An RNA of 207 nucleotides, treated with 2A3 and DMS and read out base by base. The DMS profile rests on 5,781 reads. It was measured as part of the RMDB library OK3TST. The reactions ran in a buffer of 150 mM KOAc, 10 mM MgCl2 and 150 mM bicine (pH 8.5), at 24 C.

RNA sequence: GGGAACGACUCGAGUAGAGUCGAAAAGUGGCCUUGGGAGAACGGAACCGCCCUGGCCGUCCAGCCCAGCCCUGUCUCCCUGCCAGCCGCGCACAGGCUGUCCCCGGCAUGUCCCAGGAGUGGAGUGGCCUCUGUCAGGGAGACCGCCUGUGCGCGAGAGUCAUUAAUCAUUCGUGAUUAAUGACUCAAAAGAAACAACAACAACAAC
Reactivity to 2A3 in 0.01 (KOAc 150mM, MgCl2 10mM, bicine 150mM(pH8.5), 24C), signal-to-noise 5, nucleotides 027 to 156: g140u120g010g000c040c090u100u170g030g010g000a040g010a070a020c030g020g040a120a160c050c060g050c040c060c020u040g020g000c020c010g010u060c030c030a040g010c000c000c020a000g000c000c010c010u030g050u020c010u000c020c000c010u020g030c010c050a050g060c050c010g000c000g000c000a000c000a000g000g010c000u010g000u000c000c000c000c010g010g000c000a020u150g000u000c020c020c020a060g120g150a170g220u160g030g030a090g060u280g060g000c000c000u020c000u010g020u010c050a240g000g010g000a140g000a030c000c000g000c000c000u000g000u000g000c010g000c000g000a000
Reactivity to DMS in 0.01 (KOAc 150mM, MgCl2 10mM, bicine 150mM(pH8.5), 24C), signal-to-noise 1, nucleotides 027 to 156: g020u010g010g020c000c100u010u040g020g060g020a220g010a030a070c020g000g020a080a120c050c000g020c060c090c030u000g030g010c030c060g010u000c050c000a140g020c000c020c010a090g040c030c010c020u000g000u010c060u000c000c020c010u000g010c070c050a120g010c030c000g000c010g000c030a020c000a020g010g020c010u010g000u000c010c010c010c060g000g010c020a070u000g000u000c000c020c020a160g010g000a210g040u000g020g010a150g020u010g010g000c010c000u000c020u000g030u000c050a150g080g000g000a090g000a010c000c030g000c000c010u010g000u000g010c000g000c000g010a000